Chemical mapping of a 177-nucleotide RNA with DMS and 2A3.
[RMDB]
RNA sequence: GGGAACGACUCGAGUAGAGUCGAAAAGGUAGUAGUAGCAGCAAAGUGAGGUGAGAAUCCUUACCGCCGGAGGGGCUAGGGUUCCUUGGCAAUGUUCGUCAGCCAAGGGUUAGUCGAUCCUAAGGUCUUAAUCAAUGGAAUUCGUUCCAUUGAUUAAAAAAGAAACAACAACAACAAC
Reactivity to DMS in 0.01 (KOAc 150mM, MgCl2 10mM, bicine 150mM(pH8.5), 24C), signal-to-noise 9, nucleotides 027 to 126: g010g010u010a040g010u010a050g010u010a040g020c050a060g010c060a050a070a100g010u000g000a020g010g010u010g000a140g010a210a110u010c010c010u000u000a050c040c110g010c120c130g000g010a090g010g000g000g000c030u000a040g010g010g010u030u030c010c000u000u000g000g010c010a060a090u030g000u020u020c120g010u010c080a170g000c010c010a010a020g000g000g010u020u000a030g010u000c030g000a100u000c010c010u010a100a130g010g010u010c150
Reactivity to 2A3 in 0.01 (KOAc 150mM, MgCl2 10mM, bicine 150mM(pH8.5), 24C), signal-to-noise 9, nucleotides 027 to 126: g070g020u060a020g020u010a010g010u020a010g050c050a000g000c020a060a070a030g030u030g030a010g000g010u020g010a030g020a020a030u040c000c000u010u030a030c010c020g020c010c020g030g020a030g030g060g010g000c020u030a020g040g030g060u130u160c000c000u000u000g010g000c050a060a050u070g040u140u170c170g090u110c100a120g270c040c000a010a000g010g000g000u010u020a010g010u000c040g030a080u040c010c000u030a080a030g020g010u000c010
Conditions: 150 mM KOAc, 10 mM MgCl2 and 150 mM bicine (pH 8.5), 24 C. It was measured as part of the RMDB libraries RFM100 and RFMREP. For DMS the reverse transcriptase was MarathonRT. For 2A3 the reverse transcriptase was SuperScript II with manganese.